The record gives the reactivity of an RNA of 177 nucleotides to DMS. It was measured as part of the RMDB library OK2TRN. For DMS the reverse transcriptase was MarathonRT. The reactions ran in a buffer of 150 mM KOAc, 10 mM MgCl2 and 150 mM bicine (pH 8.5), at 24 C.
[RMDB]
RNA sequence: GGGAACGACUCGAGUAGAGUCGAAAAGGGUGUGUGGUCAGAAGUGCUUUCAUCUGGCAGGCUGGAGAUCCAAGCCCAACUUGGCCACUCACCAGAUGGUUUGUAACUUGGGCAGAUUAUCGAGCAGCCGAGCACCAAUAUUCGUAUUGGUGCUCGGAAAAGAAACAACAACAACAAC
Reactivity to DMS in 0.01 (KOAc 150mM, MgCl2 10mM, bicine 150mM(pH8.5), 24C), signal-to-noise 2, nucleotides 027 to 126: g010g000g010u020g000u000g010u000g020g020u010c020a060g000a140a210g000u020g000c000u000u000u000c060a050u000c070u010g020g000c080a150g030g020c040u000g000g010a060g000a020u010c050c040a000a130g020c030c020c050a060a110c100u000u000g030g020c010c000a010c020u000c050a030c020c010a080g000a040u000g000g000u000u010u020g000u000a080a100c180u000u000g000g000g050c000a010g020a050u000u050a100u010c080g000a140g050c140a160g020